About this RNA:
Source: RMDB library 15KLIB, as collected in RNAgym. The record gives the reactivity of an RNA of 170 nucleotides to DMS and 2A3. Values cover nucleotides 27 to 129. For 2A3, 8,958 sequencing reads were counted. Values are in units of 0.01, from 0 to 300, in steps of 10. 2A3 adducts were read by reverse transcription with SuperScript II with manganese.
RNA sequence: GGGAACGACUCGAGUAGAGUCGAAAAUCAUCGCGGGCAAGUGUUAGGGCACAUUGCUGCGACUGUUAGAUUGCAAGCUGGUUCUAACACCGAGUUUGCCUCUAAUUCCUCGGUGUUGUCACUUGUUACAGUUUAGCGUUCGCGCUAAACAAAAGAAACAACAACAACAAC
Reactivity to DMS in 0.01 (KOAc 150mM, MgCl2 10mM, bicine 150mM(pH8.5), 24C), signal-to-noise 1, nucleotides 027 to 129: u030c120a150u040c080g030c050g000g000g000c000a100a060g030u030g040u020u050a130g070g000g000c000a030c040a140u030u020g000c020u030g020c030g020a000c170u000g040u030u030a080g000a040u040u030g040c000a030a040g040c010u040g000g000u000u000c080u060a010a010c000a020c000c010g010a040g020u000u000u000g060c100c100u030c090u000a060a130u020u010c090c000u010c040g020g010u000g010u000u000g020u010c060a150c160u000u000g010u040u050a090c110a080
Reactivity to 2A3 in 0.01 (KOAc 150mM, MgCl2 10mM, bicine 150mM(pH8.5), 24C), signal-to-noise 6, nucleotides 027 to 129: u150c050a020u040c020g000c040g020g030g040c020a010a020g010u000g070u180u170a150g070g080g000c020a010c060a240u040u050g000c000u020g010c000g000a000c000u020g050u070u040a080g040a290u050u140g050c060a030a020g040c100u030g040g070u120u030c020u180a000a000c000a010c020c000g010a000g000u050u200u150g120c050c020u040c010u040a110a140u130u030c040c000u000c040g000g040u000g000u030u020g020u010c030a000c060u000u010g000u010u060a050c050a010